[RMDB]
RNA sequence: GGGAACGACUCGAGUAGAGUCGAAAAUAAACACAGUUGGUGUCGCCUAUGUUAACGUCAAAUAUAAAGUAUUGGUCAUGGACUGGCGCGUUUAUAUUAUCGCUACUGUUCUGGGCCGAGUUAAUCUGUCUCUAUUCAAUUUCGAUUGAAUAGAGACAAAAGAAACAACAACAACAAC
Reactivity to DMS in 0.01 (KOAc 150mM, MgCl2 10mM, bicine 150mM(pH8.5), 24C), signal-to-noise 5, nucleotides 027 to 126: u020a080a090a060c070a060c070a080g010u010u000g020g010u000g020u010c050g030c010c020u000a050u020g010u010u010a040a060c080g020u010c130a090a050a070u010a070u010a080a090a110g010u010a120u020u010g000g020u000c010a180u010g000g000a010c010u000g000g000c080g000c040g000u000u000u000a050u010a090u040u010a030u000c010g010c020u000a030c020u000g000u010u000c000u000g020g010g000c020c010g000a060g000u000u010a040a070u010c150u010
Reactivity to 2A3 in 0.01 (KOAc 150mM, MgCl2 10mM, bicine 150mM(pH8.5), 24C), signal-to-noise 7, nucleotides 027 to 126: u220a020a060a000c040a000c010a090g090u100u090g060g020u030g030u020c020g020c010c000u090a080u170g090u030u120a090a030c020g090u070c150a020a140a010u160a040u110a130a140a010g130u070a130u100u140g010g010u020c050a110u020g010g010a000c010u010g020g040c010g000c000g020u000u120u010a210u030a080u130u150a050u110c020g000c010u030a030c020u030g050u070u010c040u060g030g010g010c010c010g010a010g000u020u090a060a080u030c060u040